[RMDB]
RNA sequence: GGGAACGACUCGAGUAGAGUCGAAAACGUGCGUACUGGGCCGCCGGCACAAUGUUCCACCCAGCCGUCUCAGAGGUCGCGGUUCGACAACGAUCAGCCAGCAGGUCAGCGGGGUCCUCCUAGCUAGCACUAAAUAGGUAUUCGUACCUAUUUAGUGAAAAGAAACAACAACAACAAC
Reactivity to 2A3 in 0.01 (KOAc 150mM, MgCl2 10mM, bicine 150mM(pH8.5), 24C), signal-to-noise 7, nucleotides 027 to 126: c020g020u050g010c020g050u070a070c030u080g020g030g000c020c020g030c030c010g040g000c040a020c010a080a130u140g020u090u030c030c000a040c030c010c000a010g020c020c010g070u030c020u010c070a080g040a060g060g050u050c030g010c030g080g000u050u080c040g030a030c030a170a050c050g020a090u050c000a000g040c010c000a010g020c020a020g010g050u050c020a010g020c030g020g020g000g000u030c000c010u000c000c000u020a050g040c030u050a030g040
Reactivity to DMS in 0.01 (KOAc 150mM, MgCl2 10mM, bicine 150mM(pH8.5), 24C), signal-to-noise 9, nucleotides 027 to 126: c120g020u000g010c050g020u010a070c070u000g010g000g010c080c050g020c050c030g010g010c050a060c090a090a080u010g000u000u000c040c040a130c060c020c030a100g010c050c040g010u010c040u000c070a100g010a120g010g010u000c050g010c070g010g000u000u000c060g010a070c100a080a090c090g000a070u000c060a090g000c040c030a070g010c050a050g000g000u000c050a070g010c060g010g000g000g000u000c030c030u000c030c020u000a080g010c080u000a090g010

An RNA of 177 nucleotides, treated with 2A3 and DMS and read out base by base. Conditions: 150 mM KOAc, 10 mM MgCl2 and 150 mM bicine (pH 8.5), 24 C. For 2A3 the reverse transcriptase was SuperScript II with manganese. For DMS the reverse transcriptase was MarathonRT. Values are in units of 0.01, from 0 to 300, in steps of 10.